[RMDB]
RNA sequence: GGGAACGACUCGAGUAGAGUCGAAAACUGAUGCCUUAUACCGACGAAACGCUGAAAAUGCUCGGAGAAAAAGGCGUAGGUCAUAUUCAGGUGAUGUGCCCGGGCUUUGCUGCGGAUUGUCUGGAGACGACUGAAAUCAAUUCGUUGAUUUCAGUCGAAAAGAAACAACAACAACAAC
Reactivity to DMS in 0.01 (KOAc 150mM, MgCl2 10mM, bicine 150mM(pH8.5), 24C), signal-to-noise 4, nucleotides 027 to 126: c080u000g020a100u010g010c070c050u000u000a170u020a150c040c030g010a060c040g010a040a060a280c050g020c020u010g020a070a050a040a040u010g000c040u000c000g020g010a150g000a030a100a090a100a090g020g000c030g020u000a060g010g010u010c020a060u000a120u010u000c160a110g010g010u010g000a050u000g010u000g010c050c010c000g010g000g000c010u000u010u000g010c030u010g010c000g020g010a260u000u000g000u000c010u000g020g000a100g030a220
Reactivity to 2A3 in 0.01 (KOAc 150mM, MgCl2 10mM, bicine 150mM(pH8.5), 24C), signal-to-noise 3, nucleotides 027 to 126: c030u050g040a070u150g070c020c000u110u120a120u090a140c000c020g000a000c000g000a060a040a010c020g000c030u050g060a030a070a030a030u180g010c020u000c030g060g030a150g130a040a130a010a010a000g050g020c030g010u060a040g000g090u020c010a020u100a100u170u120c050a040g000g220u060g080a060u030g060u100g080c010c020c000g000g020g010c000u040u060u090g030c020u010g010c010g000g040a040u030u040g000u010c130u200g020g030a050g020a040
Conditions: 150 mM KOAc, 10 mM MgCl2 and 150 mM bicine (pH 8.5), 24 C. The record gives the reactivity of an RNA of 177 nucleotides to DMS and 2A3. Values cover nucleotides 27 to 126. For DMS, 3,378 sequencing reads were counted. For 2A3 the reverse transcriptase was SuperScript II with manganese.